[RMDB]
RNA sequence: GGGAACGACUCGAGUAGAGUCGAAAAGGUGAUUGGAAAACGAAAUGUGUUCAGUACCUUAUUAAAGGGCGCAAACGUGAUAAAGUUACAGGAGAGUUUAUUGACGGUUACCGUGUAGUCGUUUAUCCAAAUUUGAGACCAACAGCAGAAGCGACAAGAUGGAGUCACAAUUCGUUGUGACUCCAUCAAAAGAAACAACAACAACAAC
Reactivity to DMS in 0.01 (KOAc 150mM, MgCl2 10mM, bicine 150mM(pH8.5), 24C), signal-to-noise 2, nucleotides 027 to 156: g000g060u000g020a150u020u070g050g000a090a080a070a120c030g000a110a050a120u000g010u000g000u010u000c030a090g030u010a040c030c020u000u000a120u010u010a050a080a090g000g040g040c050g000c040a060a080a110c070g000u030g000a130u000a010a100a100g010u010u000a090c040a090g030g020a160g000a090g020u010u000u000a100u020u000g000a080c060g000g020u000u000a090c020c090g050u010g010u000a070g000u020c020g000u000u000u000a070u000c040c040a070a080a160u010u000u020g000a080g010a060c010c020a060a050c030a020g040c010a030g000a110a220g030c080g020a100c050a080a150
Reactivity to 2A3 in 0.01 (KOAc 150mM, MgCl2 10mM, bicine 150mM(pH8.5), 24C), signal-to-noise 2, nucleotides 027 to 156: g070g040u070g030a090u020u040g000g030a060a030a030a010c010g020a010a050a090u250g030u020g000u050u010c000a010g000u060a060c000c000u000u000a070u030u170a090a040a000g000g020g000c050g010c050a100a050a020c060g050u020g040a020u060a110a080a060g040u080u110a060c060a080g010g010a030g010a000g020u000u070u120a190u090u080g040a050c010g010g000u090u040a030c030c050g010u040g050u120a010g060u000c030g000u000u060u060a090u000c000c000a040a040a040u130u100u110g010a050g030a030c020c020a020a080c000a070g000c000a010g000a140a000g070c000g030a010c030a000a030